[RMDB]
RNA sequence: GGGAACGACUCGAGUAGAGUCGAAAAGUGGCCAUGAGCCGCCGAUACGACCGCGCGCAGAAGGGCUUCCUGCUGACCAGCCUGCGCCGCGCCUACGCGCCCCUGUUGGCGCGCGAGAACGCGGCGCCCUUCUUCACUUCUUCGGAAGUGAAGAAGGAAAAGAAACAACAACAACAAC
Reactivity to 2A3 in 0.01 (KOAc 150mM, MgCl2 10mM, bicine 150mM(pH8.5), 24C), signal-to-noise 2, nucleotides 027 to 126: g050u010g020g030c050c020a210u290g010a020g010c000c000g030c000c000g070a040u090a120c080g010a030c020c000g000c020g040c010g010c050a010g030a160a080g080g020g000c040u060u040c020c000u050g030c050u050g040a080c000c030a040g060c000c060u020g000c000g000c000c000g010c010g000c020c000u020a000c030g000c000g000c020c020c000c110u210g130u300u260g100g020c030g000c000g020c300g070a010g000a030a000c020g000c000g010g000c000g000c000

The record gives the reactivity of an RNA of 177 nucleotides to 2A3. 2A3 adducts were read by reverse transcription with SuperScript II with manganese. Reactivities are given for positions 27 through 126.